[RMDB]
RNA sequence: GGGAACGACUCGAGUAGAGUCGAAAAUUCUGUUGAAUUCACUGUCAAAUUCAGUGUUUUAGUAUUCUUUGAAGAGUUUUGCAUCUAUGUUCAUUAGGAAUAUUGGCCUGUAAUUUUGUUUUGUCAUACUCUCCUAGUCUGGCUUUGGUAUCAAGGAAUCCUAUAUUAGGUUCGCCUAAUAUAGGAUAAAAGAAACAACAACAACAAC
Reactivity to 2A3 in 0.01 (KOAc 150mM, MgCl2 10mM, bicine 150mM(pH8.5), 24C), signal-to-noise 2, nucleotides 027 to 156: u010u000c020u080g090u080u010g030a090a100u110u040c040a010c040u050g030u050c110a080a090a120u200u020c000a000g000u000g030u040u060u000u040a020g000u020a140u090u050c040u040u010u110g050a080a030g030a000g100u100u120u170u170g000c010a040u030c060u100a060u120g100u050u070c080a050u080u150a040g010g040a010a060u020a060u200u050g020g050c000c010u030g030u160a080a090u060u060u070u100g090u120u060u090u040g030u030c010a020u030a100c020u000c000u020c040c020u020a040g050u000c040u000g000g000c000u000u000u000g020g020u020a030u280c020a010a010g050g020a010
Reactivity to DMS in 0.01 (KOAc 150mM, MgCl2 10mM, bicine 150mM(pH8.5), 24C), signal-to-noise 2, nucleotides 027 to 156: u000u010c030u010g010u000u000g000a080a070u000u020c020a010c030u000g010u010c010a140a100a300u000u000c000a020g030u000g010u000u010u010u010a090g020u000a100u010u010c040u000u000u010g020a050a080g010a090g020u000u000u000u000g020c030a050u010c060u010a060u000g000u000u000c040a160u000u020a110g000g000a080a080u010a070u000u000g040g020c030c040u020g020u020a070a100u000u000u000u000g010u030u000u000u000g010u010c020a090u000a070c060u000c030u010c000c030u010a060g000u000c040u010g010g020c010u000u000u010g000g020u000a040u010c040a020a050g030g010a130